[RMDB]
RNA sequence: GGGAACGACUCGAGUAGAGUCGAAAAUGGUAAAUAUUUUAGGCUUUGGGAGCAACAUACAGUCUCUGUUGCACACUAUUCCUCUUCUUUGUAAAACUCUUUUUAAAUGUAAAGAUCACUCUUAUUUGUAGGCCAUACAAAAGCAGGUGACUGGCUACGUUUUAUAAUGGUUCGCCAUUAUAAAACGAAAAGAAACAACAACAACAAC
Reactivity to 2A3 in 0.01 (KOAc 150mM, MgCl2 10mM, bicine 150mM(pH8.5), 24C), signal-to-noise 4, nucleotides 027 to 156: u070g020g000u120a100a090a040u090a230u120u150u070u070a050g030g010c020u080u090u130g050g030g010a050g030c030a020a040c010a020u220a060c070a060g170u030c060u000c010u080g020u010u020g010c030a020c000a010c050u030a070u070u060c030c030u030c020u130u060c020u060u180u090g030u050a000a040a100a080c020u080c010u060u080u050u050u110a040a150a070u140g030u060a020a150a050g020a050u050c000a030c020u090c030u050u140a080u150u140u030g030u010a020g050g110c040c020a050u020a040c020a040a060a000a010g010c030a050g060g010u030g040a030c010u010g020g000c000u060a030
Reactivity to DMS in 0.01 (KOAc 150mM, MgCl2 10mM, bicine 150mM(pH8.5), 24C), signal-to-noise 2, nucleotides 027 to 156: u010g020g000u000a040a120a120u020a050u010u000u010u000a060g030g000c040u000u010u040g030g010g020a210g040c030a060a050c050a110u000a080c070a120g040u010c040u000c070u000g040u000u010g010c010a130c030a090c080u010a090u000u010c030c010u000c000u000u000c010u020u000u000g020u000a120a050a050a070c080u000c000u000u000u000u000u000a020a080a190u000g000u000a050a090a220g010a080u000c020a080c050u010c070u000u000a230u000u010u010g030u000a070g000g030c080c040a110u000a080c050a050a030a050a120g050c110a050g010g020u000g010a090c050u000g020g000c010u000a110